[RMDB]
RNA sequence: GGGAACGACUCGAGUAGAGUCGAAAAUCAGCCCUUGGAUUCAGUUUUCCUAGUGAUAAUGGCUUUCUGGCUUUUCAUCUAUUAUGAGUGGCUGCUUAUCACAAUACUGUCUCCUUGCUUGUGGCAAGAGUAGUAGAUCCUUCGGGAUCUACUACUCAAAAGAAACAACAACAACAAC
Reactivity to DMS in 0.01 (KOAc 150mM, MgCl2 10mM, bicine 150mM(pH8.5), 24C), signal-to-noise 2, nucleotides 027 to 126: u010c120a120g000c020c010c030u010u010g010g020a010u010u010c000a010g020u000u010u020u010c110c130u010a140g010u000g000a010u000a000a060u010g020g020c050u000u000u010c150u000g000g020c040u010u000u000u010c040a020u010c300u000a100u010u010a060u000g000a040g030u000g000g010c000u000g000c150u000u000a010u000c010a020c010a090a080u000a040c010u000g010u000c030u000c010c000u000u010g020c200u000u000g010u010g010g000c040a120a110
Reactivity to 2A3 in 0.01 (KOAc 150mM, MgCl2 10mM, bicine 150mM(pH8.5), 24C), signal-to-noise 3, nucleotides 027 to 126: u060c000a020g030c030c000c000u030u030g020g010a000u020u030c020a020g030u000u030u100u160c040c060u100a030g010u000g010a000u020a040a040u140g090g020c000u110u170u070c060u130g070g000c020u040u080u140u030c030a060u000c040u260a210u260u120a050u230g010a020g030u010g020g000c000u040g020c020u030u020a000u000c000a010c000a030a050u060a040c000u010g010u010c000u000c010c000u000u030g050c080u090u120g070u060g060g000c020a060a020
The record gives the reactivity of an RNA of 177 nucleotides to DMS and 2A3. The reactions ran in a buffer of 150 mM KOAc, 10 mM MgCl2 and 150 mM bicine (pH 8.5), at 24 C. The DMS profile rests on 1,645 reads. It was measured as part of the RMDB library RFMREP. Values cover nucleotides 27 to 126.